Chemical mapping of a 177-nucleotide RNA with DMS and 2A3. For DMS, 1,619 sequencing reads were counted. Conditions: 150 mM KOAc, 10 mM MgCl2 and 150 mM bicine (pH 8.5), 24 C. Source: RMDB library OK2TST, as collected in RNAgym.
RNA sequence: GGGAACGACUCGAGUAGAGUCGAAAAAUUUGGUGCUGGACCCAGAGUAUGUCUCGGAAUGCGGUUUGCACUUUUGGAGCAGAAAGGAUUAUUGUCACAUAUACUCAAAAAAUAUACUUUCGAGACAUGGUACCUAAUACUUCGGUAUUAGGUACCAAAAAGAAACAACAACAACAAC
Reactivity to DMS in 0.01 (KOAc 150mM, MgCl2 10mM, bicine 150mM(pH8.5), 24C), signal-to-noise 2, nucleotides 027 to 126: a120u010u000u000g030g010u000g020c020u000g010g010a140c050c040c060a140g030a130g020u000a040u000g010u000c020u000c040g000g010a020a070u000g010c040g010g020u000u000u000g020c030a060c130u000u000u000u000g000g010a040g010c050a040g000a070a120a150g000g000a070u000u000a110u010u000g000u000c050a060c090a080u000a140u000a050c020u020c020a000a010a050a020a060a080u020a070u010a130c160u000u000u000c010g000a030g010a010c020a050
Reactivity to 2A3 in 0.01 (KOAc 150mM, MgCl2 10mM, bicine 150mM(pH8.5), 24C), signal-to-noise 1, nucleotides 027 to 126: a010u140u160u120g030g020u000g020c030u050g000g050a000c040c000c020a020g030a020g080u160a060u100g050u000c000u010c000g000g050a100a060u070g000c110g000g000u080u070u150g060c020a010c000u100u100u060u030g090g000a010g000c020a020g180a080a070a060g020g020a050u170u090a090u230u290g110u090c050a020c050a100u140a010u050a200c010u000c090a000a000a060a020a060a050u290a090u080a080c020u000u000u040c020g000a000g010a000c010a050